This 177-nucleotide RNA was probed chemically with DMS and 2A3. Values cover nucleotides 27 to 126. The DMS profile rests on 107,036 reads. Source: RMDB library OK1LIB, as collected in RNAgym. 2A3 is a SHAPE reagent: it acylates the 2'-hydroxyl of flexible nucleotides of all four kinds. The 2A3 profile rests on 34,047 reads.

[RMDB]
RNA sequence: GGGAACGACUCGAGUAGAGUCGAAAAGGCCGCGCGUACCGGCUCGAGUGGUACGCGUUUGGCCGGUGAAGGUGCUGGUUAGCCCCGCGAAAGGCGCGUGUUAGGCGGGCCUAUGCGCGCGGAAAAAGCAUCAGCCGAGGUUCGCCUUGGCUGGUGCAAAAGAAACAACAACAACAAC
Reactivity to DMS in 0.01 (KOAc 150mM, MgCl2 10mM, bicine 150mM(pH8.5), 24C), signal-to-noise 9, nucleotides 027 to 126: g010g010c000c000g000c000g000c000g010u000a000c010c010g020g010c070u020c140g010a110g010u020g000g010u000a000c000g000c000g000u000u030u030g040g010c000c000g010g020u010g010a100a130g000g010u010g000c030u000g010g000u010u020a080g010c010c010c010c010g000c050g010a040a070a040g000g000c000g000c000g010u000g010u030u040a080g010g000c010g000g000g010c000c010u000a020u030g010c020g000c000g010c250g000g000a040a060a070a120a100
Reactivity to 2A3 in 0.01 (KOAc 150mM, MgCl2 10mM, bicine 150mM(pH8.5), 24C), signal-to-noise 9, nucleotides 027 to 126: g010g000c000c000g000c000g000c000g000u010a000c000c010g070g040c050u040c040g030a030g050u130g010g000u010a000c000g000c000g000u010u030u060g000g000c000c000g000g000u050g030a080a030g040g010u060g010c020u030g010g070u050u100a020g000c010c000c010c000g010c010g020a070a040a010g050g000c040g000c010g070u040g090u140u120a080g090g000c010g010g030g020c000c000u060a090u190g030c030g000c000g000c030g020g040a090a110a020a010a010